Chemical mapping of a 177-nucleotide RNA with 2A3 and DMS.

RNA sequence: GGGAACGACUCGAGUAGAGUCGAAAACGAGCAGAUCGAGCAACUGCUGGCGAACGCCAACAGGAUCGCGCGCGUGCUCGGCGACCGCAGCGAGCAGGUCAACGGGCUGCUGGUGAAUGCCAAGACGCAGGCUGUAAAAGUUCGCUUUUACAGCCUGAAAAGAAACAACAACAACAAC
Reactivity to 2A3 in 0.01 (KOAc 150mM, MgCl2 10mM, bicine 150mM(pH8.5), 24C), signal-to-noise 9, nucleotides 027 to 126: c020g000a010g020c010a010g030a170u160c040g030a020g050c020a020a060c010u020g000c010u010g020g000c040g080a180a060c210g020c000c000a010a020c000a020g070g050a120u090c070g010c010g000c010g000c020g080u030g000c000u000c000g010g000c000g020a030c000c060g010c010a020g060c020g080a040g030c060a050g010g070u110c060a040a040c050g000g070g000c000u010g000c030u070g030g020u040g070a130a070u130g020c010c010a040a030g030a020c060g000
Reactivity to DMS in 0.01 (KOAc 150mM, MgCl2 10mM, bicine 150mM(pH8.5), 24C), signal-to-noise 6, nucleotides 027 to 126: c020g010a020g040c020a070g000a090u020c050g010a080g040c070a120a170c010u010g010c040u000g000g010c000g020a130a100c230g000c000c000a020a050c000a030g000g000a090u020c110g010c060g030c030g020c140g010u020g000c000u000c030g000g030c220g010a070c030c030g000c070a140g000c070g000a070g000c030a080g000g000u000c060a080a260c070g000g000g020c000u000g000c000u000g010g000u010g000a100a070u040g000c000c020a100a110g000a140c170g000
For 2A3, 11,419 sequencing reads were counted. Values cover nucleotides 27 to 126. For 2A3 the reverse transcriptase was SuperScript II with manganese.